[RMDB]
RNA sequence: GGGAACGACUCGAGUAGAGUCGAAAAUGUAAAAUGGAGAUAGCUCCAUCUCCAGCCUUGGCCUAAGGAUCAAUGAUGGUAUAAUCUGCACUGUCUGAUAUGGUAACUGCUAGUCACACGUGACUAUUUAAUGCAAAAUUUAAAAUUAAAUAAAGUAUGAUUACUCCAUAUUCGUAUGGAGUAAUCAAAAAGAAACAACAACAACAAC
Reactivity to 2A3 in 0.01 (KOAc 150mM, MgCl2 10mM, bicine 150mM(pH8.5), 24C), signal-to-noise 1, nucleotides 027 to 156: u250g010u110a030a030a120a120u040g000g070a030g000a020u030a000g030c080u030c050c020a000u010c000u000c000c000a000g000c000c030u010u030g000g000c000c010u030a020a020g080g040a070u040c110a030a060u160g020a030u080g030g000u100a050u020a130a030u000c100u020g040c060a020c000u020g000u100c030u010g030a050u050a020u140g030g000u000a020a020c000u060g020c000u030a020g030u080c030a000c020a000c100g000u050g020a000c010u000a000u040u100u100a070a010u000g010c000a000a000a230a000u120u050u250a150a080a050a000u240u300a120a000a180u300a040a120a300g250u300a020

An RNA of 207 nucleotides, treated with 2A3 and read out base by base. The RNA was probed in 150 mM KOAc, 10 mM MgCl2 and 150 mM bicine (pH 8.5) at 24 C. The data come from the RNA Mapping Database (RMDB), library OK3TST.